[RMDB]
RNA sequence: GGGAACGACUCGAGUAGAGUCGAAAACAGGAAACUGGUUAAUCGUUUUCCCUGGUAGUAUAGCGGAAACCAUAAAUAAGAAGAACUCUAAGUGCUUGAGUAGAGUUAAAAUAAUUAGACAGGCAAUUAAGGUACUCCACGUUCGCGUGGAGUACAAGUUUGCUGUUUAGUUCGCUAAACAGCAAACAAAAGAAACAACAACAACAAC
Reactivity to 2A3 in 0.01 (KOAc 150mM, MgCl2 10mM, bicine 150mM(pH8.5), 24C), signal-to-noise 3, nucleotides 027 to 156: c030a030g130g110a090a070a040c050u090g000g040u070u080a070a110u200c050g000u040u000u040u060c010c000c000u010g090g020u000a090g040u050a080u100a130g020c040g000g020a020a040a070c020c010a050u160a170a130a020u150a180a000g100a050a030g010a040a030c000u000c000u020a010a010g010u020g180c000u010u010g000a000g000u000a000g000a000g020u110u130a020a030a000a000u080a020a000u140u000a020g000a000c000a000g010g000c000a000a020u130u120a110a040g090g000u000a000c000u010c000c000a010c000g010u020u050c190g000c000g110u010g000g020a000g000u000a000c000a000a000
This 207-nucleotide RNA was probed chemically with 2A3. The 2A3 profile rests on 1,517 reads. Reactivities are rounded to 0.1 and cut off at 0 and 3. Conditions: 150 mM KOAc, 10 mM MgCl2 and 150 mM bicine (pH 8.5), 24 C.